RNA sequence: GGGAACGACUCGAGUAGAGUCGAAAAACAUUUUGGGGAAGGUAAGAGAAACCAAAUUUAGACUGAAAGGGAUCAGUGGCCAGGUGUGGUGGCUUACACCUGUAAUCCCAGCAGUGUGGGAGGCUGAGGCAGUAGGAUUGCUUGAGGCCAGGAGCUGGCGUCGUAUGUUGUUCGCAACAUACGACGCAAAAGAAACAACAACAACAAC
Reactivity to 2A3 in 0.01 (KOAc 150mM, MgCl2 10mM, bicine 150mM(pH8.5), 24C), signal-to-noise 1, nucleotides 027 to 156: a010c080a100u140u080u020u040g050g070g000g090a150a020g020g050u110a030a110g000a010g060a130a040a000c000c050a080a050a090u150u080u030a070g060a120c090u080g090a280a090a000g010g000g000a000u180c100a040g070u070g040g010c050c000a000g020g000u050g000u020g030g030u010g000g010c000u030u000a000c010a000c000c020u070g040u100a050a100u050c010c010c000a000g020c070a010g000u060g010u050g120g050g000a040g010g000c030u040g000a000g010g010c000a000g040u000a010g010g010a070u010u130g030c020u000u070g060a020g010g010c000c000a000g040g000a000g010c050u050g000